Structure probing data (DMS and 2A3) for a 177-nucleotide construct. For 2A3 the reverse transcriptase was SuperScript II with manganese. Conditions: 150 mM KOAc, 10 mM MgCl2 and 150 mM bicine (pH 8.5), 24 C. Reactivities are given for positions 27 through 126. Source: RMDB library TTRDEL, as collected in RNAgym.

RNA sequence: GGGAACGACUCGAGUAGAGUCGAAAAGAUAUGGACCCUAGCAACAGCUAUUGGUCGGAAACGACCGGGUAGACAUGCUAGGUCCUAAGUCAAAACUCCAAGACAUUGUUCGCAAUGUCUUGGAGAAUCUACUAGCCUAGUUCGCUAGGCUAGUAGAAAAAGAAACAACAACAACAAC
Reactivity to DMS in 0.01 (KOAc 150mM, MgCl2 10mM, bicine 150mM(pH8.5), 24C), signal-to-noise 4, nucleotides 027 to 126: g000a040u000a300u000g000g000a010c110c100c090u000a000g020c010a030a080c200a210g010c010u000a020u000u000g000g010u000c000g010g010a050a080a110c010g000a020c000c000g030g020g000u000a000g000a100c070a200u000g010c000u000a020g010g020u000c010c000u000a020a080g000u000c030a100a100a100a200c000u000c000c000a010a010g000a000c000a010u000u000g000u000u020c220g000c000a010a010u000g000u000c000u000u000g000g000a000g010a030a050
Reactivity to 2A3 in 0.01 (KOAc 150mM, MgCl2 10mM, bicine 150mM(pH8.5), 24C), signal-to-noise 3, nucleotides 027 to 126: g010a000u030a020u060g000g000a020c080c100c030u030a000g000c010a010a190c070a190g070c030u020a020u090u120g000g000u000c020g020g010a060a060a020c000g010a010c010c000g020g000g000u050a040g030a120c050a110u040g000c000u000a000g030g010u010c000c000u000a090a010g030u010c020a000a010a090a210c000u000c000c000a000a010g000a000c000a000u030u000g030u070u170c300g000c170a030a010u010g000u000c000u000u010g000g000a000g000a000a000